[RMDB]
RNA sequence: GGGAACGACUCGAGUAGAGUCGAAAAAAGGAAGCCCAAGGGUCCAAGCAUCUCGCUCUCCUCUCUCUGCUCCCUGCUCACCCUCCCCUCCCAGGCCUCUGCAUCCCUUUCCCUGGUGGAGCCAAACUAGUCAAGGUAACUUCGGUUACCUUGACUAAAAAGAAACAACAACAACAAC
Reactivity to DMS in 0.01 (KOAc 150mM, MgCl2 10mM, bicine 150mM(pH8.5), 24C), signal-to-noise 2, nucleotides 027 to 126: a110a070g010g000a180a090g010c050c010c090a090a080g020g000g000u000c070c010a140a070g020c070a060u020c050u010c110g000c050u010c030u000c020c010u000c020u000c020u010c060u020g020c090u000c030c000c020u000g000c040u000c060a080c040c010c020u000c040c040c000c000u000c000c020c000a110g000g000c010c000u000c030u000g030c100a030u020c030c040c000u000u010u010c040c010c000u000g020g030u000g000g000a120g030c060c050a040a070a090c160
Reactivity to 2A3 in 0.01 (KOAc 150mM, MgCl2 10mM, bicine 150mM(pH8.5), 24C), signal-to-noise 2, nucleotides 027 to 126: a010a000g150g020a080a030g040c010c020c020a010a100g030g010g000u030c030c000a020a020g030c010a110u020c020u020c040g030c010u000c000u000c020c000u030c000u020c000u000c010u000g010c000u040c000c010c000u010g020c020u040c010a040c000c010c000u010c000c020c000c000u030c010c000c010a000g030g000c010c000u020c000u020g020c010a060u060c000c000c000u000u020u000c000c000c000u020g000g050u030g010g010a010g000c010c000a030a050a040c070
Background:
The data come from the RNA Mapping Database (RMDB), library RFM100. This 177-nucleotide RNA was probed chemically with DMS and 2A3. The 2A3 profile rests on 2,544 reads. 2A3 adducts were read by reverse transcription with SuperScript II with manganese. For DMS, 3,796 sequencing reads were counted. Conditions: 150 mM KOAc, 10 mM MgCl2 and 150 mM bicine (pH 8.5), 24 C.